[RMDB]
RNA sequence: GGGAACGACUCGAGUAGAGUCGAAAACUGUUACACGGGAAUCCGAGCAUUCCUUGGAUGCAGCCAGCCUCGCCGGGAACGCGGACCAGGGGAGCGAGGAUCCGCUGGCGAUGAUCUUCACCAGCGGUGGGAGGGAUGUUUUCGAACAUCCCUCCCAAAAAGAAACAACAACAACAAC
Reactivity to 2A3 in 0.01 (KOAc 150mM, MgCl2 10mM, bicine 150mM(pH8.5), 24C), signal-to-noise 1, nucleotides 027 to 126: c020u000g100u170u100a080c020a070c100g060g020g040a050a040u050c050c020g030a070g000c080a280u000u030c010c000u030u000g000g000a000u050g020c010a000g030c040c000a020g090c000c020u070c130g000c030c020g040g010g060a100a050c110g040c050g030g030a050c020c000a070g040g000g000g000a000g000c000g020a000g000g000a000u000c000c000g000c000u000g000g000c000g040a030u120g080a080u030c100u000u000c140a000c000c000a000g000c000g000g020
Reactivity to DMS in 0.01 (KOAc 150mM, MgCl2 10mM, bicine 150mM(pH8.5), 24C), signal-to-noise 2, nucleotides 027 to 126: c060u000g010u030u040a150c100a080c080g000g000g000a060a010u000c030c050g000a300g040c040a110u030u010c000c000u000u000g000g010a230u030g030c050a050g000c080c040a100g000c110c000u000c080g020c040c110g000g010g000a070a140c170g010c000g000g000a100c000c040a010g120g010g000g010a100g020c020g000a220g020g010a020u010c000c000g010c000u020g000g020c120g040a030u030g000a110u010c250u000u000c000a140c000c000a000g050c020g000g020
Source: RMDB library OK1LIB, as collected in RNAgym. Structure probing data (2A3 and DMS) for a 177-nucleotide construct. For 2A3, 707 sequencing reads were counted. 2A3 adducts were read by reverse transcription with SuperScript II with manganese. Reactivities are given for positions 27 through 126. The reactions ran in a buffer of 150 mM KOAc, 10 mM MgCl2 and 150 mM bicine (pH 8.5), at 24 C.